The record gives the reactivity of an RNA of 207 nucleotides to 2A3.

RNA sequence: GGGAACGACUCGAGUAGAGUCGAAAAGAGAACCUCUUCCCUUCCUCCGCGGUUCUUCUUCGACUCGGACCGGCUCAUCUCGACGAGAGGCGGCAGUCCUCAGUACUCUUACUCUUUGUUUGUAAAGAGGAGACUGCUGGACUCGCCGCCCAAGUUCGCUUAGAAAAUCGUUCGCGAUUUUCUAAGCAAAAGAAACAACAACAACAAC
Reactivity to 2A3 in 0.01 (KOAc 150mM, MgCl2 10mM, bicine 150mM(pH8.5), 24C), signal-to-noise 2, nucleotides 027 to 156: g070a010g000a000a010c000c000u060c130u160u220c090c040c030u080u110c070c060u130c100c050g000c090g030g000u000u020c000u050u030c010u000u020c020g020a010c010u020c000g000g250a030c030c010g000g000c000u020c010a050u010c010u010c040g060a040c000g030a020g010a120g060g010c000g010g000c000a000g000u000c000c020u000c000a020g010u110a300c030u000c020u080u140a200c010u000c000u040u110u040g210u250u240u190g210u300a000a000a010g000a000g000g000a000g020a000c020u010g040c070u000g000g010a000c010u000c110g000c000c000g000c000c000c000a010a000g000u020u040c050
The 2A3 profile rests on 1,041 reads.